[RMDB]
An RNA of 177 nucleotides, treated with DMS and 2A3 and read out base by base. Conditions: 150 mM KOAc, 10 mM MgCl2 and 150 mM bicine (pH 8.5), 24 C. For DMS the reverse transcriptase was MarathonRT. The DMS profile rests on 30,708 reads.
RNA sequence: GGGAACGACUCGAGUAGAGUCGAAAAGUCGAAACUAGGCGGCCGUGCCGAAUAUGAUCGCGAGUUCUUGUUCGAUUUGCUUGAGGCCUAUGGCCGCGCCAAAUCCUCAAUUACGCGACUGCGGUCGCAACUUGAGUUCAUUCGUGAACUCAAGUUGAAAAGAAACAACAACAACAAC
Reactivity to DMS in 0.01 (KOAc 150mM, MgCl2 10mM, bicine 150mM(pH8.5), 24C), signal-to-noise 9, nucleotides 027 to 126: g010u000c100g010a100a090a120c120u000a130g010g010c020g010g000c020c030g030u000g010c070c040g000a130a080u000a060u010g000a060u000c020g010c090g010a120g010u010u010c120u000u000g010u010u010c090g000a050u000u000u000g010c120u000u000g010a160g010g010c060c120u010a100u010g020g020c000c010g010c020g000c290c060a030a060a070u000c010c030u000c100a050a070u010u010a070c090g010c010g000a020c030u000g020c100g020g010u000c010g010
Reactivity to 2A3 in 0.01 (KOAc 150mM, MgCl2 10mM, bicine 150mM(pH8.5), 24C), signal-to-noise 8, nucleotides 027 to 126: g050u040c020g040a070a060a110c080u060a090g170g000c010g010g000c020c020g010u100g010c020c020g030a060a050u130a060u120g090a090u030c020g000c040g050a050g150u150u090c070u160u130g070u080u080c040g010a030u010u010u080g060c060u050u060g050a030g030g000c010c020u080a150u230g010g000c000c000g000c000g000c000c000a050a060a020u030c000c010u040c020a050a110u120u100a070c080g000c000g010a010c020u050g020c090g070g000u000c010g000